[RMDB]
RNA sequence: GGGAACGACUCGAGUAGAGUCGAAAAGGGAAAAUGUCGAGUAUUUGUAUUAUGGUAAAAGACUCGUGGAAAGAAUUGACAAACUGGAGAGCUUUCAUCAUAUCUCCCAAGUAUACGGUAUGCAUAGCCCGAAGUAACGGUUCGCCGUUACUUCGGGAAAAGAAACAACAACAACAAC
Reactivity to 2A3 in 0.01 (KOAc 150mM, MgCl2 10mM, bicine 150mM(pH8.5), 24C), signal-to-noise 1, nucleotides 027 to 126: g020g080g070a120a210a000a000u100g010u100c090g000a030g000u000a110u040u100u000g020u110a070u100u000a040u160g130g030u050a000a020a000a000g000a000c010u000c010g060u070g000g180a200a000a000g100a040a050u180u260g010a000c040a070a170a060c060u000g040g040a000g000a050g100c000u000u020u000c000a000u000c130a000u200a120u050c020u000c040c000c000a010a020g000u000a000u020a130c060g100g000u040a050u070g000c020a000u100a050g160
Description: This 177-nucleotide RNA was probed chemically with 2A3. Conditions: 150 mM KOAc, 10 mM MgCl2 and 150 mM bicine (pH 8.5), 24 C. It was measured as part of the RMDB library OK1LIB.